[RMDB]
Chemical mapping of a 177-nucleotide RNA with DMS and 2A3. Conditions: 150 mM KOAc, 10 mM MgCl2 and 150 mM bicine (pH 8.5), 24 C. 2A3 adducts were read by reverse transcription with SuperScript II with manganese.
RNA sequence: GGGAACGACUCGAGUAGAGUCGAAAAGGUACCCGAACCAUAAUCCAUGUGGGGUUCCAUUCGCAUGAGUUUCAUGGACUCGAUUCAUAGAUCUAUGACACUCAAUGCGAGAUGGGACCUCGGUGGACUGAAAUAGGAUAUUCGUAUCCUAUUUCAGAAAAGAAACAACAACAACAAC
Reactivity to DMS in 0.01 (KOAc 150mM, MgCl2 10mM, bicine 150mM(pH8.5), 24C), signal-to-noise 9, nucleotides 027 to 126: g010g020u030a100c010c000c010g010a120a120c170c120a110u020a100a180u000c000c000a020u000g010u040g030g010g000g010u000u000c000c000a010u010u000c000g010c000a020u000g000a020g000u000u000u000c000a000u000g010g000a020c170u000c060g010a200u030u030c290a190u020a120g000a070u000c000u000a010u000g000a010c040a010c000u000c000a020a040u010g010c000g000a020g010a010u000g000g000g010a000c000c000u000c000g000g040u000g000g000a070
Reactivity to 2A3 in 0.01 (KOAc 150mM, MgCl2 10mM, bicine 150mM(pH8.5), 24C), signal-to-noise 9, nucleotides 027 to 126: g100g030u130a110c000c000c010g030a050a050c050c020a130u140a220a070u090c000c000a030u070g120u280g220g000g000g000u000u000c000c000a000u010u010c000g000c000a000u000g000a000g000u000u000u010c000a000u000g010g000a020c070u020c050g140a150u230u120c070a100u170a150g050a090u000c000u010a000u000g000a000c000a000c020u000c000a040a080u000g000c000g000a020g020a010u000g000g000g000a000c000c000u000c000g000g000u000g000g000a010